[RMDB]
RNA sequence: GGGAACGACUCGAGUAGAGUCGAAAAUGAGCCCUGGUAACGCUUGGCUCGGCUAUAAUAUAAUUAAUAGCUUUGAAUUUUUGAAGGGGUCGAGGUCGUCCUCUGGAGUGUCUGCCUACUUUAGCAGACGAUUAGUGGACUUCGGUCCACUAAUCGUAAAAGAAACAACAACAACAAC
Reactivity to DMS in 0.01 (KOAc 150mM, MgCl2 10mM, bicine 150mM(pH8.5), 24C), signal-to-noise 2, nucleotides 027 to 126: u010g000a000g010c000c000c020u000g040g000u000a070a120c300g010c030u000u000g020g030c010u000c010g010g030c010u000a000u000a060a050u030a070u070a110a140u040u000a120a020u000a000g010c000u030u030u030g010a140a090u030u030u030u000u000g010a040a090g020g000g000g000u000c000g000a020g000g020u010c000g000u000c020c000u000c040u000g020g010a120g050u040g000u000c020u000g000c020c100u040a220c200u020u020u010a080g010c000a010g000
Reactivity to 2A3 in 0.01 (KOAc 150mM, MgCl2 10mM, bicine 150mM(pH8.5), 24C), signal-to-noise 2, nucleotides 027 to 126: u090g000a000g010c000c000c000u020g010g000u020a010a000c000g010c080u000u010g000g000c000u000c010g000g020c000u000a020u040a060a090u150a020u100a170a210u210u190a110a130u020a000g000c000u050u050u130g090a150a090u080u080u020u070u190g050a080a040g080g010g040g020u030c020g020a030g010g130u030c020g020u010c000c000u000c020u040g080g030a110g050u050g010u030c000u010g000c000c010u090a170c060u190u170u230a080g000c000a000g000

Chemical mapping of a 177-nucleotide RNA with DMS and 2A3. For 2A3, 762 sequencing reads were counted. The reactions ran in a buffer of 150 mM KOAc, 10 mM MgCl2 and 150 mM bicine (pH 8.5), at 24 C. It was measured as part of the RMDB library RFM100.